RNA sequence: GGGAACGACUCGAGUAGAGUCGAAAAGACGCGUUUCGACGCGUCAAAAAUCCUAAGUCAGCUACGAACGGGAGAUCGAUAAGUGUCGGAAACGACACUUUUGACGAUCUUUGAUCGUUCGAGCUGAUAUGGAAAAAAAGAGGCUUUCGAGCCUCAAGGAUACACUCGAGUUCGCUCGAGUGUAUCCAAAAGAAACAACAACAACAAC
Reactivity to 2A3 in 0.01 (KOAc 150mM, MgCl2 10mM, bicine 150mM(pH8.5), 24C), signal-to-noise 1, nucleotides 027 to 156: g000a000c000g000c000g030u150u170u080c120g080a010c000g020c010g020u000c000a000a000a000a000a000u020c020c000u050a210a020g080u030c020a030g000c060u270a300c280g000a020a020c010g000g000g000a020g000a000u000c000g040a030u020a080a010g010u000g030u010c010g010g080a040a080a060c000g000a000c000a000c000u030u000u000u040g010a050c030g000a000u000c000u050u050u010g000a030u060c000g000u010u010c010g000a010g000c000u000g000a000u000a000u000g030g050a160a080a000a000a000a000a000g010a000g030g000c010u010u150u300c190g040a000g000c000c010u020c000a000a020
Source: RMDB library RNAMAK, as collected in RNAgym.
This 207-nucleotide RNA was probed chemically with 2A3.